[RMDB]
RNA sequence: GGGAACGACUCGAGUAGAGUCGAAAAUCAGGAGGAGAGCAAGAGCGUACUGCUCUUGCUAAGCAUCUUGGCGCUGAGUUAUCAGGAAUUACCUACAUUCUUGAUGAACCUUCCAUAGGACUCCAUCAAUGUACGCAGAGUUCGCUCUGCGUACAUUAAAAGAAACAACAACAACAAC
Reactivity to 2A3 in 0.01 (KOAc 150mM, MgCl2 10mM, bicine 150mM(pH8.5), 24C), signal-to-noise 2, nucleotides 027 to 126: u110c020a040g020g040a000g020g030a100g000a010g100c010a000a000g000a000g010c030g090u150a210c100u160g000c000u000c000u010u000g070c000u000a000a000g070c010a050u010c010u030u030g000g050c090g040c120u050g030a050g200u010u050a010u010c010a000g000g030a030a000u060u020a180c000c060u070a070c060a080u010u020c000u010u030g010a000u010g060a020a020c000c000u010u040c010c000a030u080a050g070g040a070c010u020c010c000a060u100c030
Reactivity to DMS in 0.01 (KOAc 150mM, MgCl2 10mM, bicine 150mM(pH8.5), 24C), signal-to-noise 3, nucleotides 027 to 126: u010c050a090g000g020a030g000g020a090g020a030g010c010a000a010g010a020g020c010g030u020a110c240u010g010c000u010c000u010u000g000c000u000a010a030g020c110a110u000c040u000u000g020g000c280g000c120u000g000a090g000u000u010a040u000c020a010g020g010a030a010u000u000a140c250c140u000a060c220a080u000u000c000u000u000g000a020u000g000a030a040c020c050u000u010c030c020a070u000a060g000g000a130c050u010c020c030a100u010c170